[RMDB]
RNA sequence: GGGAACGACUCGAGUAGAGUCGAAAAUGCCUAAUUCAAGGAAUUAGCGUGCCUUCAUGCUUAGGGUUUGAUAUCUGCUAAAACCCGGUGCAUUCAUCAAUGCAGGUUAAGCCAAAGGGAUGUCCCGAAAAGAACGCAAGGUUCGCCUUGCGUUCAACAUACGAGGGAUGUUCGCAUCCCUCGUAUGAAAAGAAACAACAACAACAAC
Reactivity to DMS in 0.01 (KOAc 150mM, MgCl2 10mM, bicine 150mM(pH8.5), 24C), signal-to-noise 3, nucleotides 027 to 156: u000g030c040c010u000a040a050u000u000c020a150a200g030g000a050a070u000u000a050g030c050g030u000g000c020c010u010u030c060a080u010g020c020u000u000a110g020g010g010u000u010u000g010a120u000a080u010c040u000g000c090u000a160a040a040a030c000c000c020g010g040u010g010c030a080u010u000c060a090u000c110a120a140u000g000c000a030g040g020u000u000a030a070g010c020c120a050a080a100g020g010g010a100u010g010u010c010c000c010g000a040a060a110a150g010a020a010c000g030c010a020a020g020g000u000u000c300g000c010c010u020u000g010c010g010u000u000c010a030a110
Reactivity to 2A3 in 0.01 (KOAc 150mM, MgCl2 10mM, bicine 150mM(pH8.5), 24C), signal-to-noise 5, nucleotides 027 to 156: u120g000c010c000u010a020a010u020u030c100a180a130g170g040a070a050u010u000a020g010c030g040u040g060c020c010u040u060c070a060u180g000c010u010u050a050g010g020g030u010u020u010g090a070u080a130u160c140u170g050c080u120a030a010a020a050c010c000c000g020g030u040g010c010a020u030u120c030a070u080c080a070a060u020g000c010a000g200g040u090u100a030a010g010c020c040a080a030a000g020g030g030a070u100g060u040c010c000c000g010a040a050a010a020g010a000a000c000g000c000a010a000g050g010u030u060c170g090c020c000u000u000g000c000g000u000u000c000a000a010